[RMDB]
RNA sequence: GGGAACGACUCGAGUAGAGUCGAAAAAUGCACUGGUUCGCCAGUGCAUGAUUACCGAGAAAGUACCUGGGUAUAAAAGUGCAACCCUUGGAAACAAGGGAAUUCCGAACCGAUUCGUCGGUUCGAAGUAUUCAUGUCAUUUCGAUGACAUGAAUACAAAAGAAACAACAACAACAAC
Reactivity to 2A3 in 0.01 (KOAc 150mM, MgCl2 10mM, bicine 150mM(pH8.5), 24C), signal-to-noise 7, nucleotides 027 to 126: a000u000g000c000a000c000u000g010g040u030u020c100g060c060c000a000g000u000g000c000a000u000g000a000u000u040a020c000c010g020a030g050a080a140a010g060u050a040c020c030u130g050g060g060u110a100u070a170a160a040a040g120u110g070c030a080a150c000c000c000u000u000g010g010a050a050a010c000a010a000g020g000g070a030a050u090u020c040c000g000a000a010c000c000g010a010u020u070c210g040u000c010g070g000u010u000c000g000a010a000
Reactivity to DMS in 0.01 (KOAc 150mM, MgCl2 10mM, bicine 150mM(pH8.5), 24C), signal-to-noise 9, nucleotides 027 to 126: a010u000g000c000a010c000u000g010g000u000u010c250g020c010c000a010g000u000g010c000a000u000g000a110u010u000a110c020c010g010a120g010a110a080a100g010u000a050c060c020u010g010g010g010u000a080u000a050a060a080a080g010u010g020c120a120a120c000c000c000u000u000g000g000a130a110a180c000a000a010g000g000g000a050a060u000u000c060c010g010a010a000c000c000g000a030u000u010c200g010u000c000g010g000u000u000c000g010a010a060